[RMDB]
RNA sequence: GGGAACGACUCGAGUAGAGUCGAAAACAGGAGCACGAGUUCUCACUGCUGGGCUACAAGUUCCACCUACCGUUUGUGGGCCAUGCCGUCGACUCGGAUCUAGAUGAUAGUGACAGUGAUGAGGGUAUCGACUGGAGUGAUUCGUCACUCCAGUCGAAAAAGAAACAACAACAACAAC
Reactivity to 2A3 in 0.01 (KOAc 150mM, MgCl2 10mM, bicine 150mM(pH8.5), 24C), signal-to-noise 1, nucleotides 027 to 126: c020a090g010g030a030g060c130a000c060g030a030g050u090u000c050u040c050a020c020u020g000c010u050g000g050g000c030u090a030c050a090a070g050u130u060c040c030a050c040c030u100a080c030c000g100u070u030u090g060u030g010g010g000c000c000a060u150g040c000c010g010u060c020g020a030c010u030c030g030g020a050u000c020u040a080g020a220u090g040a080u090a080g030u040g060a040c050a020g010u010g030a050u070g050a000g070g010g030u050a030
Reactivity to DMS in 0.01 (KOAc 150mM, MgCl2 10mM, bicine 150mM(pH8.5), 24C), signal-to-noise 2, nucleotides 027 to 126: c070a130g020g030a110g010c110a170c060g000a070g020u000u000c060u000c080a070c050u010g000c040u000g020g020g010c000u000a060c080a070a050g000u000u000c010c050a070c070c040u000a070c100c050g000u000u000u000g020u000g000g020g000c050c060a030u010g030c050c100g010u000c040g010a040c010u000c020g000g020a110u000c060u010a040g010a170u000g000a130u000a030g010u000g010a090c050a080g000u000g020a090u000g010a080g010g010g020u000a120
This 177-nucleotide RNA was probed chemically with 2A3 and DMS. Source: RMDB library OK2TST, as collected in RNAgym. Conditions: 150 mM KOAc, 10 mM MgCl2 and 150 mM bicine (pH 8.5), 24 C. For DMS the reverse transcriptase was MarathonRT. The DMS profile rests on 1,825 reads. The 2A3 profile rests on 1,195 reads.